An RNA of 177 nucleotides, treated with DMS and 2A3 and read out base by base. Conditions: 150 mM KOAc, 10 mM MgCl2 and 150 mM bicine (pH 8.5), 24 C.
[RMDB]
RNA sequence: GGGAACGACUCGAGUAGAGUCGAAAAGAUAUGGAUCCUCCACGAUUGACUGAUGACCUCGCUCGGAAACGAGCGAGCAAGGUUAGAGUGGAGGGAUCCUAAGUCAAAAUCUCAGUUCGCUGAGAAACUUAUUUUACUGCUUCGGCAGUAAAAUAAGAAAAGAAACAACAACAACAAC
Reactivity to DMS in 0.01 (KOAc 150mM, MgCl2 10mM, bicine 150mM(pH8.5), 24C), signal-to-noise 3, nucleotides 027 to 126: g030a040u010a300u000g000g000a020u010c000c000u000c000c010a010c010g000a300u010u010g000a040c030u010g000a080u010g020a070c300c000u000c000g000c000u010c000g010g000a100a050a170c000g000a010g020c000g010a010g000c010a030a030g020g000u000u010a040g020a250g020u010g010g000a030g050g020g000a000u000c000c000u010a030a110g000u010c040a160a160a190a220u000c000u000c000a040g010u000u040c240g020c010u000g000a020g010a070a090a140
Reactivity to 2A3 in 0.01 (KOAc 150mM, MgCl2 10mM, bicine 150mM(pH8.5), 24C), signal-to-noise 2, nucleotides 027 to 126: g030a010u080a060u100g000g000a000u030c000c010u000c010c020a030c030g180a290u160u300g070a040c040u100g090a290u130g040a210c040c010u000c000g010c000u000c000g000g000a000a070a050c000g000a000g000c020g000a000g020c010a040a080g050g000u050u070a080g020a010g160u000g000g020a110g030g000g010a000u020c000c000u000a100a020g040u000c030a000a060a300a300u000c020u000c010a050g070u090u220c300g000c070u030g030a000g000a090a020a030
The data come from the RNA Mapping Database (RMDB), library TTRDES.